[RMDB]
RNA sequence: GGGAACGACUCGAGUAGAGUCGAAAAGAUAUGGACAGUAGGGAGAUCGUGGUCGGAAACGACCACAGAUCGAGGAUCUACGUCCUAAGUCAAAAUCCUUGAAUAAUGUUCGCAUUAUUCAAGGAAACUUUUACGUUACGUUCGCGUAACGUAAAAGAAAAGAAACAACAACAACAAC
Reactivity to DMS in 0.01 (KOAc 150mM, MgCl2 10mM, bicine 150mM(pH8.5), 24C), signal-to-noise 2, nucleotides 027 to 126: g000a000u000a140u000g010g000a020c000a180g030u000a000g000g000g010a030g010a000u000c000g020u000g000g000u010c000g020g010a040a040a080c010g020a000c000c010a000c000a000g020a000u010c000g010a140g010g010a040u010c010u000a000c000g000u000c010c020u000a010a100g000u000c010a080a100a130a140u000c000c000u000u000g000a010a000u010a010a020u000g000u000u010c230g030c010a010u000u000a010u000u000c000a020a010g010g000a000a020a040
Reactivity to 2A3 in 0.01 (KOAc 150mM, MgCl2 10mM, bicine 150mM(pH8.5), 24C), signal-to-noise 2, nucleotides 027 to 126: g010a030u040a010u060g000g010a020c160a210g030u000a010g000g020g010a030g010a010u000c000g010u000g030g000u000c000g010g010a030a020a000c000g000a000c000c020a000c050a010g000a000u010c010g020a050g020g000a000u010c000u000a000c000g000u000c000c010u030a060a020g020u020c030a050a020a020a250u020c000c010u010u010g020a010a000u000a000a000u000g030u070u080c300g010c130a000u000u010a010u010u020c030a010a000g000g040a030a000a000
This 177-nucleotide RNA was probed chemically with DMS and 2A3. It was measured as part of the RMDB library TTRDEL. The reactions ran in a buffer of 150 mM KOAc, 10 mM MgCl2 and 150 mM bicine (pH 8.5), at 24 C. The 2A3 profile rests on 6,265 reads.